[RMDB]
RNA sequence: GGGAACGACUCGAGUAGAGUCGAAAACUAAGGGUCUUCGGACCCUUAGAAAUAACGGUCGGCUGAUGACGCUAGUCGAUCAUGCUGCUCGACCUAGACUAAAAAGGCUCAGGUUCGCCUGAGCCAAGAUUACUAUAUGCUUCGGCAUAUAGUAAUCAAAAGAAACAACAACAACAAC
Reactivity to DMS in 0.01 (KOAc 150mM, MgCl2 10mM, bicine 150mM(pH8.5), 24C), signal-to-noise 6, nucleotides 027 to 126: c000u000a010a010g000g010g020u000c000u000u010c190g030g000a010c000c000c000u000u000a000g000a060a080a050u010a090a110c240g000g000u000c000g000g000c010u000g000a030u000g000a030c020g010c070u010a070g010u010c000g000a090u000c000a020u000g010c050u000g000c040u010c020g000a030c010c000u000a110g000a230c110u000a030a060a060a120a100g010g010c000u000c000a010g000g010u000u020c240g010c000c000u000g000a000g000c010c000a010a000
Reactivity to 2A3 in 0.01 (KOAc 150mM, MgCl2 10mM, bicine 150mM(pH8.5), 24C), signal-to-noise 3, nucleotides 027 to 126: c000u000a010a000g000g010g010u010c000u020u060c140g060g000a000c000c000c000u000u000a000g000a000a000a010u090a030a010c050g000g010u000c010g020g000c010u020g010a010u010g010a000c010g000c080u070a040g140u260c000g110a190u010c030a000u100g140c030u010g020c040u060c100g010a010c000c000u020a060g070a060c070u110a020a000a050a090a050g010g000c000u000c000a000g000g060u040u050c160g070c020c000u000g000a010g000c000c000a010a000